RNA sequence: GGGAACGACUCGAGUAGAGUCGAAAACCCGAAAAUGGAUGGCGCUGAAGCGCGCGACCCACACCCGGCCAUCUGGGCGAACGCCAUGCCCCGAUGAGUAGGAGGGCGCGGCGGCCGCUGCAAAACCCAGAGACAUUAGCUUCGGCUAAUGUCUCUGAAAAGAAACAACAACAACAAC
Reactivity to 2A3 in 0.01 (KOAc 150mM, MgCl2 10mM, bicine 150mM(pH8.5), 24C), signal-to-noise 3, nucleotides 027 to 126: c020c000c000g020a100a060a020a030u140g060g030a040u080g030g010c030g000c080u090g070a100a060g050c070g000c000g020c000g130a200c000c030c000a040c000a050c050c010c010g100g000c020c000a000u010c040u030g000g020g030c010g000a120a030c040g000c040c000a050u080g000c010c000c000c010g100a130u120g060a020g080u170a030g040g110a070g010g000g000c010g000c010g010g020c000g020g010c010c000g040c010u040g020c020a030a060a040a050c030c010
Reactivity to DMS in 0.01 (KOAc 150mM, MgCl2 10mM, bicine 150mM(pH8.5), 24C), signal-to-noise 1, nucleotides 027 to 126: c000c000c020g020a030a080a040a100u070g000g010a120u000g000g000c120g000c000u000g000a100a130g010c060g000c010g000c030g000a070c020c010c000a090c150a150c040c000c020g060g020c120c000a060u020c020u010g010g000g010c030g000a150a080c130g000c050c020a070u020g000c020c000c050c060g010a180u020g000a140g000u070a080g010g000a150g000g000g000c000g010c010g000g040c000g010g020c050c020g000c010u030g040c030a090a070a070a090c100c050